Chemical mapping of a 177-nucleotide RNA with 2A3. The RNA was probed in 150 mM KOAc, 10 mM MgCl2 and 150 mM bicine (pH 8.5) at 24 C. For 2A3 the reverse transcriptase was SuperScript II with manganese. Values are in units of 0.01, from 0 to 300, in steps of 10. Source: RMDB library RFM100, as collected in RNAgym.
RNA sequence: GGGAACGACUCGAGUAGAGUCGAAAAACGAUGACCGGUACGCCGGUCAUCGAAAGCUAUGAUUGUCCAAACGCAAUUCUUGUUGAUAUUCAAUAUUCAAGGGUUGCGACUGGGCAUCGCGGCUCAAUGGUACCGGAAUAUUCGUAUUCCGGUACCAAAAAGAAACAACAACAACAAC
Reactivity to 2A3 in 0.01 (KOAc 150mM, MgCl2 10mM, bicine 150mM(pH8.5), 24C), signal-to-noise 3, nucleotides 027 to 126: a000c020g000a000u000g010a010c000c020g000g010u070a070c270g020c040c010g000g020u000c000a000u020c000g000a000a000a010g000c000u030a020u270g010a080u060u250g000u000c000c000a020a050a020c000g000c000a000a040u010u010c010u010u040g060u040u120g060a020u020a080u170u280c220a210a110u050a030u100u050c000a000a020g020g010g020u000u000g000c000g000a010c010u010g010g000g000c000a000u000c000g000c040g000g000c040u040c080a010a140